This 177-nucleotide RNA was probed chemically with DMS and 2A3. Conditions: 150 mM KOAc, 10 mM MgCl2 and 150 mM bicine (pH 8.5), 24 C. Reactivities are given for positions 27 through 126. The DMS profile rests on 10,506 reads. For 2A3, 4,698 sequencing reads were counted. It was measured as part of the RMDB library OK2TRN.
RNA sequence: GGGAACGACUCGAGUAGAGUCGAAAAGUAAUUGAGCUCGGAUGACUCGGUCGCUCCAAUUAGUCAGAGCUGGGUUUAGGCGGCCCCGAUGGCCACCGUGGAUUCUGGGAGAGGGCGGUCGUACAGCCAACCUUAGUAGGUUCGCCUACUAAGGUUGAAAAGAAACAACAACAACAAC
Reactivity to DMS in 0.01 (KOAc 150mM, MgCl2 10mM, bicine 150mM(pH8.5), 24C), signal-to-noise 7, nucleotides 027 to 126: g020u010a100a110u000u010g010a200g010c030u000c030g010g010a180u000g010a040c020u000c010g010g010u000c010g000c010u000c010c010a100a130u010u000a080g010u000c100a100g000a110g010c040u000g010g000g010u010u010u000a130g010g010c030g010g010c020c010c090c120g010a120u010g010g010c010c010a050c050c040g000u000g000g000a100u000u000c060u000g010g000g010a150g010a110g010g000g020c040g010g020u000c050g020u010a090c090a070g010c120
Reactivity to 2A3 in 0.01 (KOAc 150mM, MgCl2 10mM, bicine 150mM(pH8.5), 24C), signal-to-noise 4, nucleotides 027 to 126: g080u090a030a240u090u070g050a030g040c010u010c050g100g090a140u110g080a120c010u010c040g050g030u010c010g030c010u020c010c010a000a070u130u140a040g090u050c100a040g020a030g120c020u050g030g050g000u050u090u120a050g020g020c000g040g010c030c010c010c060g080a120u170g070g000c010c020a030c040c040g030u070g030g020a120u230u010c030u110g020g010g050a090g020a090g020g040g000c050g000g020u030c020g020u040a050c010a020g050c020